[RMDB]
RNA sequence: GGGAACGACUCGAGUAGAGUCGAAAAGACGAUAAUCACCUUUCCCGAUGUGCCGCGAAUAGCGAUAGGUGUCUUCUGGACACCCAACAUCAUACAAUUGCAACGCACUCCGCUGCCUGUCAAGUACGUAUCUUUACCCGUUCGCGGGUAAAGAUACAAAAGAAACAACAACAACAAC
Reactivity to 2A3 in 0.01 (KOAc 150mM, MgCl2 10mM, bicine 150mM(pH8.5), 24C), signal-to-noise 1, nucleotides 027 to 126: g050a060c060g030a030u100a100a100u150c030a060c060c000u010u000u000c000c010c010g000a060u060g020u090g070c030c050g070c030g070a130a090u020a110g000c010g030a060u060a060g000g000u000g000u000c000u170u040c100u190g020g020a000c000a000c000c000c040a000a100c010a040u050c010a020u040a150c030a030a180u120u080g050c050a070a030c040g000c030a050c030u020c030c020g000c000u000g000c000c000u060g080u080c000a080a000g060u030a080c060
Reactivity to DMS in 0.01 (KOAc 150mM, MgCl2 10mM, bicine 150mM(pH8.5), 24C), signal-to-noise 1, nucleotides 027 to 126: g000a150c020g000a020u000a110a100u000c030a100c090c020u000u000u040c000c000c010g010a050u000g010u000g060c200c080g070c050g000a050a080u000a060g000c020g040a160u000a070g030g040u000g000u010c010u020u030c220u000g000g000a040c000a000c000c000c130a010a010c080a020u010c010a090u010a110c190a030a070u030u040g030c080a060a060c080g000c060a090c060u010c010c060g010c030u000g000c000c060u000g000u000c080a080a090g000u010a190c210